RNA sequence: GGGAACGACUCGAGUAGAGUCGAAAAGCCAUGAUACCACACUGGUCUUUCUGACGCGUGUCCUGCUACUUAUCGAUUUCUGCGGGUUUGCCGUCGAUGCUGACAUGGGAAACCUGUCGGUGGGGCGUGCAGUAAUGGCAGGGCGAAUGCCCGUCCGGGUGUUACUGUUGUUCGCAACAGUAACACCAAAAGAAACAACAACAACAAC
Reactivity to 2A3 in 0.01 (KOAc 150mM, MgCl2 10mM, bicine 150mM(pH8.5), 24C), signal-to-noise 3, nucleotides 027 to 156: g030c000c000a020u110g020a070u090a100c060c020a050c070a040c090u160g000g010u020c020u050u210u050c100u090g040a060c010g010c050g020u060g010u010c000c000u010g050c020u010a060c020u160u090a040u240c100g100a170u030u150u020c100u160g060c070g010g010g010u050u090u090g010c000c010g000u070c030g170a270u090g070c010u050g000a030c020a210u300g020g010g000a000a040a000c020c010u010g020u020c040g010g020u020g000g020g020g020c010g050u120g010c000a010g000u090a050a020u070g010g000c010a030g020g000g000c020g030a090a080u220g020c010c000c000g010u060c020c000g060
Source: RMDB library ARCHII, as collected in RNAgym. An RNA of 207 nucleotides, treated with 2A3 and read out base by base. The RNA was probed in 150 mM KOAc, 10 mM MgCl2 and 150 mM bicine (pH 8.5) at 24 C. 2A3 adducts were read by reverse transcription with SuperScript II with manganese.